[RMDB]
RNA sequence: GGGAACGACUCGAGUAGAGUCGAAAAGAUAUGGACCCAGGGUCAUUUCGAUGAAAUAUGGUCGGAAACGACCAUAUGGAGAAAGACCUGGGUCCUAAGUCAAAAGAGCUAUGUUCGCAUAGCUCAAGACCAAGUACAACUUCGGUUGUACUUGGUCAAAAGAAACAACAACAACAAC
Reactivity to 2A3 in 0.01 (KOAc 150mM, MgCl2 10mM, bicine 150mM(pH8.5), 24C), signal-to-noise 1, nucleotides 027 to 126: g010a000u030a020u070g000g000a000c000c030c000a020g100g050g060u170c180a300u080u180u080c120g300a300u040g000a000a000a000u020a020u010g000g000u020c000g010g000a040a040a010c000g000a010c030c000a030u000a010u000g020g000a040g000a000a090a040g010a040c010c000u000g030g010g000u000c000c000u000a000a000g000u000c000a000a000a000a140g020a000g000c000u000a020u020g030u040u200c300g080c170a000u000a020g040c000u000c020a000a000
Reactivity to DMS in 0.01 (KOAc 150mM, MgCl2 10mM, bicine 150mM(pH8.5), 24C), signal-to-noise 1, nucleotides 027 to 126: g000a010u000a130u000g000g000a030c010c010c010a010g000g000g000u020c180a120u010u010u000c020g000a080u020g020a210a120a000u000a000u000g020g000u000c010g000g000a010a020a070c000g000a010c010c010a000u000a000u000g010g000a030g020a030a080a090g050a130c000c000u010g000g000g000u000c000c000u000a000a060g000u010c030a100a080a160a150g010a020g020c000u000a000u000g010u010u000c220g010c000a010u000a000g010c000u000c010a090a110

Source: RMDB library TTRDES, as collected in RNAgym. This 177-nucleotide RNA was probed chemically with 2A3 and DMS. The RNA was probed in 150 mM KOAc, 10 mM MgCl2 and 150 mM bicine (pH 8.5) at 24 C. For 2A3 the reverse transcriptase was SuperScript II with manganese. In probing experiments dimethyl sulfate is read out at A N1 and C N3, which are open when not base-paired. For 2A3, 2,133 sequencing reads were counted.